Conditions: 150 mM KOAc, 10 mM MgCl2 and 150 mM bicine (pH 8.5), 24 C. The record gives the reactivity of an RNA of 207 nucleotides to 2A3 and DMS.
RNA sequence: GGGAACGACUCGAGUAGAGUCGAAAAGAGCUGUCAGCACUAAGCCGGACGGCGCCCUCGCACCAGUUCCGCUGUGGGUUCACCUACAAGAACGUACGGUGUUGAGGCCCUGUCCGCCGCUGCGCUGCCACCUACUCUUCGCGCCGCUAGUCGAGCGUCUUAUGGUGAUGUUCGCAUCACCAUAAGAAAAAGAAACAACAACAACAAC
Reactivity to 2A3 in 0.01 (KOAc 150mM, MgCl2 10mM, bicine 150mM(pH8.5), 24C), signal-to-noise 6, nucleotides 027 to 156: g020a010g010c030u030g030u050c010a000g000c010a020c160u180a090a000g010c030c000g000g000a000c000g000g030c080g010c030c030c010u000c000g000c000a000c000c000a010g000u000u000c010c000g020c050u010g000u010g000g010g000u210u250c230a300c170c000u010a010c000a020a130g000a010a000c000g030u140a050c090g010g000u000g000u060u300g000a000g000g000c020c000c020u030g000u000c000c000g060c050c020g000c020u010g000c020g000c010u000g010c000c010a020c000c020u110a170c000u020c000u020u040c020g000c020g020c040c030g020c090u050a030g170u060c010g010a010g020c010g030
Reactivity to DMS in 0.01 (KOAc 150mM, MgCl2 10mM, bicine 150mM(pH8.5), 24C), signal-to-noise 1, nucleotides 027 to 156: g010a020g030c040u000g010u000c010a050g000c010a070c050u000a100a120g020c060c020g030g010a040c030g000g010c080g020c110c000c010u000c030g000c010a040c000c010a280g010u000u010c010c010g000c120u020g020u000g000g020g000u000u010c180a140c020c020u010a070c050a130a100g000a040a020c000g000u010a110c170g050g050u010g030u000u000g000a060g040g030c000c080c010u010g000u000c010c060g000c030c040g000c080u010g020c050g040c000u000g010c090c010a110c050c020u000a090c000u000c000u010u000c020g000c020g020c000c000g000c020u000a040g050u000c000g000a080g000c040g030
For DMS the reverse transcriptase was MarathonRT. For 2A3 the reverse transcriptase was SuperScript II with manganese. The data come from the RNA Mapping Database (RMDB), library VIROID.